[RMDB]
RNA sequence: GGGAACGACUCGAGUAGAGUCGAAAAAGCGGCCCUUUCGAGGGCCGCUGAUGGAAAGCCAGCCGAAAGGCAUUUUAUUCCUUGGCUGGCGAAACCCUAAAAUUCACGCUGCUUUCGAGCAGCGUAACGAUAAUUACCGCUUCGGCGGUAAUUAUCGAAAAGAAACAACAACAACAAC
Reactivity to DMS in 0.01 (KOAc 150mM, MgCl2 10mM, bicine 150mM(pH8.5), 24C), signal-to-noise 1, nucleotides 027 to 126: a010g020c000g020g020c000c000c020u000u000u010c100g020a060g050g020g000c010c000g020c000u000g000a050u020g000g000a060a110a300g000c000c000a010g070c000c030g030a010a020a020g000g000c300a020u000u020u000u020a200u010u000c000c010u000u010g000g000c020u000g010g020c010g000a040a020a080c020c010c020u000a070a040a110a110u040u010c100a030c020g020c000u030g000c020u000u000u020c140g000a000g000c000a000g020c000g040u020a010a050

The record gives the reactivity of an RNA of 177 nucleotides to DMS. The DMS profile rests on 750 reads. It was measured as part of the RMDB library M2PK50.